Overview
This 177-nucleotide RNA was probed chemically with 2A3 and DMS. DMS adducts were read by reverse transcription with MarathonRT. The RNA was probed in 150 mM KOAc, 10 mM MgCl2 and 150 mM bicine (pH 8.5) at 24 C.
RNA sequence: GGGAACGACUCGAGUAGAGUCGAAAAGAAGGAGAGUAGAUGAUUCGCGUUAAGUAUGUGUGAAUGGGAUGUCAUCACACAACGAAGCGAGAGCGCGGUGAAUCAUUGCAUCCGCUCCAAAACAAAACAGAACCCACUAGUUCGCUAGUGGGUUCUGAAAAGAAACAACAACAACAAC
Reactivity to 2A3 in 0.01 (KOAc 150mM, MgCl2 10mM, bicine 150mM(pH8.5), 24C), signal-to-noise 1, nucleotides 027 to 126: g210a110a020g000g000a000g000a000g000u010a020g000a010u000g000a000u010u000c000g000c000g020u000u040a060a020g000u020a080u110g020u020g010u010g030a090a030u010g000g000g030a010u000g140u100c000a030u010c010a000c020a020c000a000a030c040g010a030a020g010c010g020a060g010a030g030c010g000c000g020g000u010g000a000a000u010c000a000u000u000g000c000a000u000c020c000g000c000u000c000c000a000a100a000a000c040a000a080a000a000
Reactivity to DMS in 0.01 (KOAc 150mM, MgCl2 10mM, bicine 150mM(pH8.5), 24C), signal-to-noise 1, nucleotides 027 to 126: g000a160a120g030g020a020g000a010g020u000a140g010a050u000g060a010u000u000c000g000c000g000u010u100a040a240g000u000a150u000g000u000g000u000g000a050a040u000g000g000g000a070u000g000u000c100a020u000c000a010c000a000c000a010a000c000g000a150a130g000c030g000a140g000a200g010c050g000c090g000g080u000g010a000a050u000c050a030u000u000g000c040a010u000c010c010g000c010u010c000c050a030a020a030a110c170a030a020a010a170